An RNA of 207 nucleotides, treated with 2A3 and read out base by base.

RNA sequence: GGGAACGACUCGAGUAGAGUCGAAAAUUACCGCCCAGCAUGGGGUGCAGCGUUCCUGCAAUAUCCAGGGCACCUAGGUGCAGCCUUGUAGUUUUAGUGGACUUUAGGCUAAAGAAUUUCACUAGCAAAAAUCUUUAAGGGUUCGCCCUUAAAGAAACUAUGCUUUUAUCUUCGGAUAAAAGCAUAGAAAAGAAACAACAACAACAAC
Reactivity to 2A3 in 0.01 (KOAc 150mM, MgCl2 10mM, bicine 150mM(pH8.5), 24C), signal-to-noise 2, nucleotides 027 to 156: u150u090a050c000c050g040c050c000c020a030g010c020a060u100g030g000g040g000u030g000c040a030g070c020g090u070u080c000c000u000g010c000a030a120u030a100u300c060c000a010g030g020g010c020a030c000c030u060a090g050g030u020g000c000a000g010c000c000u060u020g040u140a030g020u040u020u020u030a000g000u010g000g010a010c010u060u050u010a020g000g040c030u040a120a150a000g050a020a080u110u200u190c010a030c020u050a020g060c060a060a070a100a040a230u010c000u000u000u000a000a000g050g000g020u030u080c170g110c030c000c030u000u000a000a000a000g000a010a000a000
Values cover nucleotides 27 to 156. The RNA was probed in 150 mM KOAc, 10 mM MgCl2 and 150 mM bicine (pH 8.5) at 24 C.